Notes
This 207-nucleotide RNA was probed chemically with DMS and 2A3. It was measured as part of the RMDB library M2RFPK. For DMS the reverse transcriptase was MarathonRT. For DMS, 1,638 sequencing reads were counted.
RNA sequence: GGGAACGACUCGAGUAGAGUCGAAAAGUGUGCUAUACUAGUAAGGUUGAAUGAAUCAACCCUUGGUGCUUAGCUUCUAUCACCAAGCAUAUUACACGCGGAUAACCGCCAAAGGAGAAAAGAUGAACUGCCCGACGAUUCUUCGGAAUCGUCGGAACCCUAUAAAUCACUUCGGUGAUUUAUAGGGAAAAGAAACAACAACAACAAC
Reactivity to DMS in 0.01 (KOAc 150mM, MgCl2 10mM, bicine 150mM(pH8.5), 24C), signal-to-noise 1, nucleotides 027 to 156: g030u000g020u020g020c000u000a110u000a170c070u000a180g010u010a140a100g040g020u010u020g010a030a250u000g000a200a200u000c000a000a030c000c030c020u000u000g000g030u000g020c140u000u030a070g010c120u020u000c040u000a290u000c040a000c030c000a000a040g000c050a100u000a050u010u000a060c000a010c030g000c000g080g000a170u020a120a140c000c040g010c060c060a000a090a090g040g010a190g000a110a040a050a090g000a210u010g010a120a130c080u000g040c050c000c010g010a030c010g010a040u010u000c010u020u000c270g020g000a000a020u000c010g010u000c000g000g030a000a020
Reactivity to 2A3 in 0.01 (KOAc 150mM, MgCl2 10mM, bicine 150mM(pH8.5), 24C), signal-to-noise 3, nucleotides 027 to 156: g030u020g010u030g040c030u070a060u070a250c080u080a080g120u130a170a050g040g000u000u000g030a100a120u180g070a060a160u070c000a000a010c000c010c000u000u010g010g000u000g040c100u080u030a050g030c050u170u070c020u110a020u010c000a000c030c010a000a000g000c000a010u020a050u140u120a020c050a000c030g020c010g020g010a070u050a230a140c000c000g010c050c060a090a090a030g090g040a080g050a070a140a040a030g070a020u160g050a050a110c040u130g030c000c000c000g010a000c000g000a000u000u010c010u010u010c020g000g000a000a000u000c000g000u000c000g010g000a000a000